[RMDB]
RNA sequence: GGGAACGACUCGAGUAGAGUCGAAAAAAAGAUAUGGACGUAUGACAUGAUCUAAGCUUGCGACGAAGCUAUUCGGAAACGAAUAGCAGAGCAAGAACGCGAUCAACAGCAUACGUCCUAAGUCAAACACUAUCAGACUCUUCGGAGUCUGAUAGUGAAAAGAAACAACAACAACAAC
Reactivity to 2A3 in 0.01 (KOAc 150mM, MgCl2 10mM, bicine 150mM(pH8.5), 24C), signal-to-noise 2, nucleotides 027 to 126: a000a000a010g130a100u110a070u100g000g010a000c020g010u020a010u020g070a150c010a130u090g000a000u040c040u030a000a110g040c000u000u020g010c040g230a300c080g000a300a020g010c000u000a010u010u020c000g020g040a090a080a100c030g020a000a000u000a000g000c000a000g000a010g020c020a010a010g010a130a040c060g000c050g050a000u030c000a020a050c030a070g150c010a020u010a000c000g020u040c000c000u020a010a020g020u010c010a000a090a000
Reactivity to DMS in 0.01 (KOAc 150mM, MgCl2 10mM, bicine 150mM(pH8.5), 24C), signal-to-noise 2, nucleotides 027 to 126: a090a100a060g000a000u000a300u000g000g000a000c010g030u000a000u030g000a050c110a270u000g000a000u000c010u010a240a100g010c010u000u000g000c000g050a260c220g000a060a190g010c000u000a000u000u000c010g010g000a120a060a140c010g030a010a010u000a010g040c000a020g000a090g010c010a000a000g010a010a010c110g000c300g000a030u000c010a030a070c280a030g060c010a030u010a000c010g000u000c020c000u000a010a060g000u000c030a090a060a130